[RMDB]
RNA sequence: GGGAACGACUCGAGUAGAGUCGAAAAUACAAGACCAUCGUUUUUAUCAAGUGGCGUCACCUGGGCGAUGGGACGUCUAAAAUAGAGUGCUUGUUGCACUCGUUUGAUGGAUAUAUAGCGCGAUAAAGCUUCCUCAACUAUUCGUAGUUGAGGAAGCAAAAGAAACAACAACAACAAC
Reactivity to 2A3 in 0.01 (KOAc 150mM, MgCl2 10mM, bicine 150mM(pH8.5), 24C), signal-to-noise 2, nucleotides 027 to 126: u110a010c030a050a000g080a030c010c010a030u040c010g010u010u040u040u050u060a190u100c050a030a060g040u020g080g030c080g030u080c020a130c280c000u050g010g070g070c080g050a050u070g000g000g000a000c000g000u030c000u050a040a080a050a060u100a040g000a010g000u020g010c050u220u210g160u190u220g060c010a000c000u000c010g000u000u000u100g020a010u020g020g040a000u040a000u000a040u030a130g090c020g020c010g030a030u120a090a120a010
Reactivity to DMS in 0.01 (KOAc 150mM, MgCl2 10mM, bicine 150mM(pH8.5), 24C), signal-to-noise 2, nucleotides 027 to 126: u000a100c180a080a060g010a160c030c020a030u010c010g020u000u000u000u000u000a090u000c080a110a100g030u010g000g000c060g000u000c010a100c030c020u000g010g010g000c040g000a060u000g000g010g000a050c020g010u000c020u010a040a030a020a030u010a090g000a010g000u000g000c000u000u010g010u000u000g010c000a000c000u010c000g020u000u000u010g020a090u020g000g000a090u000a080u020a060u010a070g020c070g020c110g010a090u010a060a100a150